RNA sequence: GGGAACGACUCGAGUAGAGUCGAAAAGAUAUGGAUUACUUGAGGGAGCCAGGGAAGACGAUGAAAUAUUUCGGAAACGAAAUAUGGAGUCUUCCAACUGGCGAAGAACUCAAGUAAUCCUAAGUCACAGUACCACAAGGUUCGCCUUGUGGUACUGAAAAGAAACAACAACAACAAC
Reactivity to DMS in 0.01 (KOAc 150mM, MgCl2 10mM, bicine 150mM(pH8.5), 24C), signal-to-noise 1, nucleotides 027 to 126: g010a010u010a300u000g010g010a000u000u000a000c010u000u000g000a030g010g010g010a090g000c000c000a030g000g010g000a010a010g010a040c010g010a120u040g000a170a130a000u040a000u030u000u000c000g000g010a060a120a210c030g000a010a010a000u010a010u000g000g020a200g080u000c010u010u010c000c010a040a010c010u000g010g070c000g000a040a080g010a070a260c010u010c030a000a020g010u000a010a000u000c000c000u000a020a110g000u000c020a250
This 177-nucleotide RNA was probed chemically with DMS.
DMS adducts were read by reverse transcription with MarathonRT.
The RNA was probed in 150 mM KOAc, 10 mM MgCl2 and 150 mM bicine (pH 8.5) at 24 C.